[RMDB]
RNA sequence: GGGAACGACUCGAGUAGAGUCGAAAACAGAGGGAGGGUGAGAACCCUCGCCGGGUUCGAGCAGAGCAGCUUGCUGCGAUGAACGGCCGCAGGCCGCCCCGAAGGGGUGAGCCACGCAGUGGCGAAUAAACUUUGAAAGUUUCGACUUUCAAAGUUUAAAAGAAACAACAACAACAAC
Reactivity to 2A3 in 0.01 (KOAc 150mM, MgCl2 10mM, bicine 150mM(pH8.5), 24C), signal-to-noise 3, nucleotides 027 to 126: c030a010g100a120g070g050g000a020g010g000g000u040g010a130g040a060a060c000c000c000u010c000g000c000c030g000g030g000u100u110c050g010a020g030c010a000g020a010g070c080a040g020c100u160u190g010c020u040g030c010g080a140u160g040a070a010c030g050g000c020c010g040c020a050g000g000c000c010g000c000c000c000c010g180a280a140g000g000g010g000u010g030a070g000c000c000a030c050g040c040a070g020u050g070g010c000g010a040a010u030
Reactivity to DMS in 0.01 (KOAc 150mM, MgCl2 10mM, bicine 150mM(pH8.5), 24C), signal-to-noise 3, nucleotides 027 to 126: c070a100g010a130g000g000g000a020g000g010g020u010g000a240g010a130a060c000c000c020u000c040g000c010c030g020g020g010u000u030c020g010a130g000c020a030g010a240g010c030a080g010c050u050u000g020c000u000g000c020g000a140u010g000a060a050c070g000g010c020c040g000c080a210g000g000c000c010g000c010c000c000c000g010a150a090g020g000g000g020u010g010a130g020c000c000a060c170g030c120a140g020u020g010g020c020g010a100a110u010